[RMDB]
RNA sequence: GGGAACGACUCGAGUAGAGUCGAAAAGUUCGACCGUUCGCGGUCGAACAAAAUAAAACAGUACAUUGCCUCGCGAAAGCGUUGUACUGAAAGGCUAAGAAAAAACGAUAUGGUUCGCCAUAUCGAAGAUACCAACUGCGUUCGCGCAGUUGGUAUCAAAAGAAACAACAACAACAAC
Reactivity to DMS in 0.01 (KOAc 150mM, MgCl2 10mM, bicine 150mM(pH8.5), 24C), signal-to-noise 1, nucleotides 027 to 126: g000u000u000c000g000a000c000c010g040u000u010c210g000c060g000g000u000c010g000a000a020c000a000a020a010a000u010a020a090a210a060c000a020g000u000a010c010a020u000u000g040c100c050u000c110g000c170g040a080a080a170g000c000g040u000u000g000u010a000c010u000g000a050a070a110g000g020c000u000a110a100g000a000a040a030a100a090a100c020g000a000u000a010u000g000g010u000u020c180g010c020c000a040u000a000u000c000g000a040a030
Reactivity to 2A3 in 0.01 (KOAc 150mM, MgCl2 10mM, bicine 150mM(pH8.5), 24C), signal-to-noise 1, nucleotides 027 to 126: g020u030u000c000g000a000c040c000g000u030u060c290g030c000g070g010u000c000g000a000a000c010a020a000a000a000u010a000a040a000a000c020a000g000u010a000c000a010u060u180g030c000c010u030c070g100c090g190a180a010a010g000c010g040u010u010g000u000a000c000u000g000a060a020a010g090g040c140u130a120a150g110a080a160a020a010a000a010c010g010a000u010a000u010g020g010u010u030c140g010c050c000a020u000a000u000c030g010a020a020